[RMDB]
RNA sequence: GGGAACGACUCGAGUAGAGUCGAAAACUCAUGGCUAUACGUAGCCAUGAGAAAGCCGCCUGGUACGCCAGGCGGCAAUCGUGGUCAGUACGAUAACUGAUAACGGUCGCCAUACGUGGCGACCGAAGUGCUUUUAGUCGUUCGCGACUAAAAGCACAAAAGAAACAACAACAACAAC
Reactivity to 2A3 in 0.01 (KOAc 150mM, MgCl2 10mM, bicine 150mM(pH8.5), 24C), signal-to-noise 2, nucleotides 027 to 126: c000u000c000a000u000g000g040c000u010a020u070a140c230g170u060a110g020c000c000a000u000g000a000g050a140a010a000g000c040c010g010c000c000u000g000g040u090a070c300g120c040c010a000g000g040c000g000g000c000a000a040u050c000g000u000g150g000u000c010a000g010u060a050c050g060a300u040a130a070c010u000g000a030u040a140a090c000g000g000u000c000g010c020c020a050u050a010c300g070u050g000g040c000g000a000c000c000g000a010a000
Chemical mapping of a 177-nucleotide RNA with 2A3. Reactivities are rounded to 0.1 and cut off at 0 and 3.